[RMDB]
RNA sequence: GGGAACGACUCGAGUAGAGUCGAAAAAUUAGCUCAUGGAUAUUAGUGCUUAUUAUAACUGUUCCAGCUUAUUUCAUGUUUGAAGCGAGUAAUAUUGUAUUUACGGCACAAAAUUCCAACGAAACAAUAUCCAAUUAUCAAUGUACACUUAUUAUGGCAGAAUGUUGGUGUUCGCACCAACAUUCUGAAAAGAAACAACAACAACAAC
Reactivity to 2A3 in 0.01 (KOAc 150mM, MgCl2 10mM, bicine 150mM(pH8.5), 24C), signal-to-noise 1, nucleotides 027 to 156: a000u150u030a010g000c010u030c150a100u060g050g020a060u000a000u110u000a150g010u010g060c010u020u120a040u180u050a090u150a140a050c010u000g010u090u000c060c010a000g000c000u020u070a020u070u280u080c080a140u120g150u220u090u140g060a040a000g000c000g000a010g130u010a000a040u030a000u010u180g000u000a030u040u160u000a060c060g000g010c060a000c050a000a020a000a020u220u090c010c010a050a050c130g000a010a010a010c030a030a030u060a060u140c010c000a010a060u300u090a030u170c050a000a000u070g090u190a060c060a000c010u130u130a090u200u030a070u180g070g050

The record gives the reactivity of an RNA of 207 nucleotides to 2A3.
The RNA was probed in 150 mM KOAc, 10 mM MgCl2 and 150 mM bicine (pH 8.5) at 24 C.